[RMDB]
RNA sequence: GGGAACGACUCGAGUAGAGUCGAAAAAUUCCUGGGAUGCUGACAGAUAUCCUUGGCAACAUCCCAUGGAUAUCCGGAAAUAGGACCACAAAUGAGCAGGAGUAGCAGAACAAGAGUGUAAAAAGUCACGGAAAAUGCUAUUCGUAGCAUUUUCCGUAAAAGAAACAACAACAACAAC
Reactivity to 2A3 in 0.01 (KOAc 150mM, MgCl2 10mM, bicine 150mM(pH8.5), 24C), signal-to-noise 2, nucleotides 027 to 126: a000u050u030c000c000u000g000g000g000a020u010g000c010u010g090a040c010a000g090a020u220a090u250c060c000u010u110g010g000c040a060a050c000a070u000c000c000c020a000u060g000g000a010u020a060u000c030c030g020g010a070a050a060u050a060g080g010a010c000c000a020c080a050a130a020u230g000a010g020c010a000g020g090a050g050u150a010g000c030a020g020a040a020c020a050a050g030a050g100u120g070u140a080a050a040a060a000g040u080c030
Reactivity to DMS in 0.01 (KOAc 150mM, MgCl2 10mM, bicine 150mM(pH8.5), 24C), signal-to-noise 2, nucleotides 027 to 126: a070u000u000c000c000u000g000g000g000a010u010g030c030u000g010a010c010a030g000a160u070a090u020c130c090u040u010g000g020c050a000a090c070a010u040c080c020c020a020u030g010g000a020u020a020u000c020c020g010g010a070a100a070u040a130g000g020a080c050c030a070c090a030a120a090u020g000a030g050c010a070g010g000a130g010u030a030g010c020a070g030a150a060c120a030a120g010a050g000u000g010u030a010a100a050a080a060g010u050c130
Chemical mapping of a 177-nucleotide RNA with 2A3 and DMS. The reactions ran in a buffer of 150 mM KOAc, 10 mM MgCl2 and 150 mM bicine (pH 8.5), at 24 C. DMS adducts were read by reverse transcription with MarathonRT. For 2A3, 1,618 sequencing reads were counted.